Conditions: 150 mM KOAc, 10 mM MgCl2 and 150 mM bicine (pH 8.5), 24 C.
Structure probing data (DMS and 2A3) for a 177-nucleotide construct.
For 2A3, 1,160 sequencing reads were counted.
For DMS, 3,179 sequencing reads were counted.
[RMDB]
RNA sequence: GGGAACGACUCGAGUAGAGUCGAAAAGCCUAGGGUGUCGGCGAGUUCACCGACUAGCGGCGCGAUGCGCUGGUGAUCGUGUCCCAGCACCACGAUUAGACGCUGCGGCGCCAGCUUGGCGAUCGCAGCAGGGCUGGCUUUUCGAAGCCAGCCCUGCAAAAGAAACAACAACAACAAC
Reactivity to DMS in 0.01 (KOAc 150mM, MgCl2 10mM, bicine 150mM(pH8.5), 24C), signal-to-noise 3, nucleotides 027 to 126: g000c020c000u000a110g010g010g030u000g010u000c120g020g000c080g000a140g020u000u000c030a070c060c020g010a040c050u010a050g000c060g020g000c020g030c040g010a130u010g000c030g020c030u000g000g020u010g010a020u000c030g000u000g000u010c030c010c020a110g000c050a060c040c000a140c060g010a150u010u000a100g000a150c110g020c010u000g000c010g010g010c010g000c000c000a090g000c270u000u010g020g010c000g020a070u000c010g030c010a020
Reactivity to 2A3 in 0.01 (KOAc 150mM, MgCl2 10mM, bicine 150mM(pH8.5), 24C), signal-to-noise 1, nucleotides 027 to 126: g040c000c000u050a060g090g000g050u060g040u050c040g010g030c030g010a070g030u140u180c050a030c050c010g010a030c040u050a000g080c070g080g020c040g000c030g230a150u220g000c000g060c100u010g030g110u040g030a070u000c010g020u020g010u090c030c050c050a010g000c020a020c000c010a070c000g020a010u070u080a060g040a080c100g000c090u050g020c000g010g000c000g000c000c000a050g060c100u140u090g020g000c020g060a110u070c000g000c000a010